Chemical mapping of a 207-nucleotide RNA with DMS and 2A3.
Source: RMDB library OK3TST, as collected in RNAgym.
RNA sequence: GGGAACGACUCGAGUAGAGUCGAAAAGAUUAUGUGGGAGAGGCGCCCUUUCGUUUCGUCGGAUAAUUAAUUGCCAGUCGCUGGCUUUAGCGAUUUUGAUGUCAUCUGUAGCGAUGACUAUGCUACUUUAAGGUAUGAUCCGGAUACCUCCGGUAAAGAUGGUAGCAUGAUUCGUCAUGCUACCAUCAAAAGAAACAACAACAACAAC
Reactivity to DMS in 0.01 (KOAc 150mM, MgCl2 10mM, bicine 150mM(pH8.5), 24C), signal-to-noise 1, nucleotides 027 to 156: g030a180u000u010a000u000g000u000g000g020g030a120g000a090g000g030c030g000c050c090c030u000u000u000c040g080u000u020u000c010g030u010c000g040g010a120u010a060a160u010u000a030a120u030u000g010c030c070a070g020u000c000g020c010u000g020g010c130u000u000u000a030g010c000g000a080u000u000u000u000g050a180u000g000u010c000a020u000c010u000g050u000a120g010c170g020a040u000g000a000c030u000a080u000g030c030u000a050c090u010u000u000a140a060g090g040u000a020u020g000a090u010c020c030g000g000a160u000a060c070c050u000c040c090g010g000u000a050a070a190
Reactivity to 2A3 in 0.01 (KOAc 150mM, MgCl2 10mM, bicine 150mM(pH8.5), 24C), signal-to-noise 3, nucleotides 027 to 156: g020a030u130u120a080u220g090u150g020g000g000a070g000a010g010g050c020g020c000c000c000u000u060u080c060g000u040u050u020c020g000u010c020g040g000a030u060a080a060u240u130a030a070u050u270g020c020c010a040g060u060c010g010c130u020g060g000c010u120u090u060a010g000c010g010a030u060u000u090u150g090a060u100g010u000c000a010u000c010u060g130u170a030g030c030g090a020u020g010a000c010u020a040u130g030c020u050a030c010u130u080u100a070a010g000g000u060a050u140g040a070u040c010c000g010g000a010u020a060c000c030u000c020c010g050g000u010a060a060a010
For 2A3 the reverse transcriptase was SuperScript II with manganese. The 2A3 profile rests on 1,468 reads.